[RMDB]
RNA sequence: GGGAACGACUCGAGUAGAGUCGAAAACGACAUGGCUUCGGCCAUGUCGAAAGGACGAGUGACACCGAAACGGAGGUAGGUCCAACUACCUUCUCACUCAAAAAAUCCGUUUGUUCGCAAACGGAAAGUCAUCUCUAUUGUUCGCAAUAGAGAUGACAAAAGAAACAACAACAACAAC
Reactivity to DMS in 0.01 (KOAc 150mM, MgCl2 10mM, bicine 150mM(pH8.5), 24C), signal-to-noise 5, nucleotides 027 to 126: c020g030a000c000a010u000g000g010c010u000u010c200g050g010c000c000a000u000g010u000c000g020a030a080a080g000g010a120c150g000a010g030u000g000a080c220a170c080c070g000a070a100a070c160g000g000a010g000g000u000a010g000g000u010c230c190a080a180c000u000a000c000c000u000u000c000u000c020a010c000u020c010a000a010a080a090a050a100u010c010c000g010u010u000u000g000u010u000c170g030c000a000a010a000c000g000g010a000a020a060
Reactivity to 2A3 in 0.01 (KOAc 150mM, MgCl2 10mM, bicine 150mM(pH8.5), 24C), signal-to-noise 3, nucleotides 027 to 126: c010g000a000c000a010u000g000g010c000u070u040c200g100g000c010c000a000u000g000u000c000g000a010a000a000g060g030a030c100g010a010g010u010g000a020c050a100c250c080g050a130a080a010c140g000g010a010g000g010u010a000g010g030u060c070c010a070a090c010u000a000c000c000u020u000c010u020c000a010c000u000c000a000a080a000a050a000a110u010c010c010g000u010u000u010g060u040u050c270g010c140a010a000a000c010g000g040a040a000a000
Annotation:
An RNA of 177 nucleotides, treated with DMS and 2A3 and read out base by base. DMS adducts were read by reverse transcription with MarathonRT. The reactions ran in a buffer of 150 mM KOAc, 10 mM MgCl2 and 150 mM bicine (pH 8.5), at 24 C.